[RMDB]
RNA sequence: GGGAACGACUCGAGUAGAGUCGAAAAAAUACAAUUAUCGUUUCAUGGACUAAUGACCCACCAGUGACAACGGAACCAAUCAACGGAGUUCCUACAAAUGGGAUUGUACAAAAUAUUCAGUUCUCUGUGAAUAUGAACUACACCAAUAAUGUUGACGAAGAUUACUUCAAUUCGUUGAAGUAAUCUUAAAAGAAACAACAACAACAAC
Reactivity to DMS in 0.01 (KOAc 150mM, MgCl2 10mM, bicine 150mM(pH8.5), 24C), signal-to-noise 1, nucleotides 027 to 156: a040a030u000a090c010a020a060u000u010a060u000c030g000u000u010u010c020a090u000g000g010a150c040u000a100a100u010g010a120c010c000c070a160c040c010a200g000u000g010a150c040a060a190c070g020g000a020a070c070c020a030a140u050c060a070a100c060g000g010a100g010u000u010c010c000u000a300c070a040a040a070u000g010g010g000a070u000u000g010u000a160c080a040a020a110a110u000a000u000u000c010a100g020u000u000c000u000c100u000g000u010g000a060a040u000a070u010g010a040a110c040u000a070c000a070c040c030a040a120u000a020a090u010g000u010u000g010a140c150g000
Reactivity to 2A3 in 0.01 (KOAc 150mM, MgCl2 10mM, bicine 150mM(pH8.5), 24C), signal-to-noise 4, nucleotides 027 to 156: a000a000u280a060c130a040a080u200u080a120u160c050g000u030u010u040c020a030u050g030g030a030c020u070a150a070u170g080a120c000c000c010a030c010c010a050g030u020g100a040c030a050a020c110g000g000a000a030c220c010a040a080u300c040a070a040c030g110g000a110g030u000u000c000c010u040a020c030a020a100a050u070g030g030g040a030u080u090g010u050a020c040a010a140a030a010u040a020u020u040c000a000g090u110u110c110u020c040u190g120u000g070a010a000u020a040u050g020a030a020c010u040a020c060a020c050c040a030a080u210a130a030u140g000u030u030g030a030c020g060

Conditions: 150 mM KOAc, 10 mM MgCl2 and 150 mM bicine (pH 8.5), 24 C. Structure probing data (DMS and 2A3) for a 207-nucleotide construct. For DMS, 1,836 sequencing reads were counted. For DMS the reverse transcriptase was MarathonRT.